[RMDB]
RNA sequence: GGGAACGACUCGAGUAGAGUCGAAAAGAUAUGGAGCCACGACAUGCUUAUGCAUGGUCGGAAACGACCAUGUAAGCAACAGCGUGGAACUACUCCUAAGUCAAACACGGCACUUCGGUGCCGUGAACAAGUAGACUGGGUUCGCCCAGUCUACUUGAAAAGAAACAACAACAACAAC
Reactivity to 2A3 in 0.01 (KOAc 150mM, MgCl2 10mM, bicine 150mM(pH8.5), 24C), signal-to-noise 2, nucleotides 027 to 126: g050a010u050a060u200g010g010a000g020c000c000a000c000g100a080c020a080u100g040c020u150u090a050u240g040c010a010u000g010g010u020c010g010g060a000a050a040c010g000a010c000c000a000u020g000u020a000a010g030c010a030a060c060a070g060c000g000u000g000g020a000a010c010u150a050c000u000c000c010u030a130a030g070u020c030a000a130a050c020a010c000g010g000c010a030c030u030u140c300g100g000u000g010c000c010g000u000g000a000a010
Reactivity to DMS in 0.01 (KOAc 150mM, MgCl2 10mM, bicine 150mM(pH8.5), 24C), signal-to-noise 3, nucleotides 027 to 126: g010a050u010a300u010g010g010a010g010c020c000a020c000g000a050c100a140u000g010c000u000u000a050u010g060c040a010u000g000g010u000c000g000g010a070a140a220c000g010a000c000c000a010u000g000u000a040a030g010c010a040a070c220a100g000c010g020u000g010g000a030a040c030u010a300c010u000c000c000u000a070a150g010u000c040a120a100a120c000a000c000g000g000c000a000c000u000u020c160g020g000u000g030c000c000g010u000g000a040a120
This 177-nucleotide RNA was probed chemically with 2A3 and DMS. It was measured as part of the RMDB library TTRDEL. The reactions ran in a buffer of 150 mM KOAc, 10 mM MgCl2 and 150 mM bicine (pH 8.5), at 24 C. For DMS, 2,938 sequencing reads were counted. Values cover nucleotides 27 to 126.